Description
Chemical mapping of a 207-nucleotide RNA with 2A3 and DMS. The reactions ran in a buffer of 150 mM KOAc, 10 mM MgCl2 and 150 mM bicine (pH 8.5), at 24 C. Values are in units of 0.01, from 0 to 300, in steps of 10.

RNA sequence: GGGAACGACUCGAGUAGAGUCGAAAAUCGGCCAUUCGUGGCCGACACAAAGGGGUCACGCGUUUGACGUGGAGCUAGGUACUGAAGCCUCCACGGUACCUAGCGUUGAAACCGAGCGUGACGGAGGCACCCAGUAGCCUGUCGUUCGCGACAGGAAACGGUCAGUAAGUUUCGACUUACUGACCGUAAAAGAAACAACAACAACAAC
Reactivity to 2A3 in 0.01 (KOAc 150mM, MgCl2 10mM, bicine 150mM(pH8.5), 24C), signal-to-noise 3, nucleotides 027 to 156: u020c010g000g000c000c010a030u060u090c300g130u100g000g030c010c000g020a000c040a000c010a000a090a010g110g000g020g000u020c000a000c020g070c030g060u100u150u260g230a230c180g050u150g060g000a000g010c000u000a000g010g000u000a000c000u010g010a080a010g000c000c000u000c000c000a000c000g010g000u000a000c000c000u000a000g000c000g020u040u130g020a100a010a020c010c020g010a020g020c010g000u000g000a010c020g000g000a010g010g010c000a000c000c000c000a020g060u100a040g060c000c000u000g030u010c000g010u020u070c290g000c010g100a000c010a000g000g000a080a030
Reactivity to DMS in 0.01 (KOAc 150mM, MgCl2 10mM, bicine 150mM(pH8.5), 24C), signal-to-noise 1, nucleotides 027 to 156: u010c000g010g000c010c000a080u000u010c280g060u010g060g000c000c010g020a030c010a070c040a090a100a240g000g000g020g000u040c000a010c010g050c010g010u000u000u000g020a160c110g030u010g000g010a220g020c000u010a010g080g010u000a040c000u030g000a040a110g000c060c010u000c000c000a300c070g070g000u010a000c030c000u010a020g010c000g000u030u000g010a050a170a090c020c040g000a100g010c030g040u030g000a000c010g000g060a000g150g090c100a110c010c000c010a300g040u000a110g000c010c000u000g010u000c000g000u010u010c260g060c000g010a010c000a010g000g020a000a040

The data come from the RNA Mapping Database (RMDB), library RNAMAK. For 2A3, 2,735 sequencing reads were counted.